Record summary:
Structure probing data (2A3) for a 177-nucleotide construct. For 2A3, 565 sequencing reads were counted. The reactions ran in a buffer of 150 mM KOAc, 10 mM MgCl2 and 150 mM bicine (pH 8.5), at 24 C.

[RMDB]
RNA sequence: GGGAACGACUCGAGUAGAGUCGAAAAAGCAUGUUCACCAGCAGCAGCUGACGGGUGUUCAACGGCGAGGUCCCGGUGAUAGCGCUGCCGAUGAUGGCAAAGGCCACCUCGCCCGCGUUGCCGCCGAACGCGUGGCUACUUUCGAGUAGCCACGCGUAAAAGAAACAACAACAACAAC
Reactivity to 2A3 in 0.01 (KOAc 150mM, MgCl2 10mM, bicine 150mM(pH8.5), 24C), signal-to-noise 1, nucleotides 027 to 126: a000g170c180a060u200g000u110u070c000a060c000c000a000g010c040a030g000c010a020g000c020u190g040a030c010g020g070g050u030g000u210u280c050a020a030c030g030g000c000g000a050g000g000u170c050c000c000g000g010u130g070a000u090a000g050c040g000c080u020g030c000c000g080a070u300g000a070u010g000g040c000a020a190a100g180g000c000c000a000c000c000u030c000g000c000c000c000g000c040g000u080u060g000c000c000g030c010c060g090a000